[RMDB]
RNA sequence: GGGAACGACUCGAGUAGAGUCGAAAACAGGGAACGAAUAAUACUCAGAUCGCAAACACGGCUUUCGUUAUGGCCGCGAUUGCCGCCCUUGUAGACUCGUCGCCUGACGCACUGAAUACGCUGAACGAGCUGGCGGCGGCGCUGGGCAAUGACCCGAGCAGUAUUUUACCUUCGGGUAAAAUACUGCAAAAGAAACAACAACAACAAC
Reactivity to 2A3 in 0.01 (KOAc 150mM, MgCl2 10mM, bicine 150mM(pH8.5), 24C), signal-to-noise 2, nucleotides 027 to 156: c000a010g000g000g020a060a050c040g010a080a060u090a180a020u080a060c100u120c130a050g080a200u040c010g020c040a060a130a000c030a020c060g010g000c020u090u110u130c130g160u130u190a070u300g020g000c000c000g020c040g050a070u000u110g060c010c000g010c000c000c000u040u130g080u110a100g050a200c020u020c080g000u010c000g040c030c000u030g020a040c060g020c040a010c080u010g040a100a080u270a200c060g030c090u060g050a210a000c020g010a030g040c010u000g020g000c050g000g000c000g010g020c040g000c010u040g000g030g000c000a000a110u090g030a060c010c000c020g040a000
Chemical mapping of a 207-nucleotide RNA with 2A3. The reactions ran in a buffer of 150 mM KOAc, 10 mM MgCl2 and 150 mM bicine (pH 8.5), at 24 C. Reactivities are given for positions 27 through 156. Source: RMDB library OK3TST, as collected in RNAgym.